[RMDB]
RNA sequence: GGGAACGACUCGAGUAGAGUCGAAAACUAAUCGAACCAUCUAGUAGCUGGUUCCUGCCGAAGUUUCCCUCAGGAUAGCAAAGACUUUUAAAUUAGUUUUAUGAGGUAAAGCAAAUGAUUAGAGGGCCAUUAGGAUUACGUUCGCGUAAUCCUAAUGAAAAGAAACAACAACAACAAC
Reactivity to 2A3 in 0.01 (KOAc 150mM, MgCl2 10mM, bicine 150mM(pH8.5), 24C), signal-to-noise 4, nucleotides 027 to 126: c000u030a020a030u080c030g020a020a010c010c030a020u040c010u050a130g090u150a020g260c030u020g040g010u030u020c010c010u050g040c020c020g120a100a030g040u040u080u030c020c010c000u010c010a020g040g020a070u080a050g020c060a100a020a040g060a090c010u000u060u090u220a040a160a150u110u090a070g070u020u000u040u050a070u060g020a010g000g050u120a060a050a000g000c030a040a060a110u090g030a020u040u040a000g030a050g060g040g000c020
Reactivity to DMS in 0.01 (KOAc 150mM, MgCl2 10mM, bicine 150mM(pH8.5), 24C), signal-to-noise 5, nucleotides 027 to 126: c030u010a030a040u000c060g000a030a020c030c010a030u000c030u010a180g000u010a170g030c130u000g010g010u000u000c000c070u000g000c230c060g010a100a090g010u000u000u000c030c000c000u000c040a040g010g010a080u000a120g010c040a060a110a100g000a050c010u000u000u010u000a030a050a070u000u010a090g000u010u010u000u000a040u010g010a040g000g000u010a050a080a130g000c020a030a050a060u000g000a050u000u000a050g020a080g010g010g010c180
This 177-nucleotide RNA was probed chemically with 2A3 and DMS. Conditions: 150 mM KOAc, 10 mM MgCl2 and 150 mM bicine (pH 8.5), 24 C.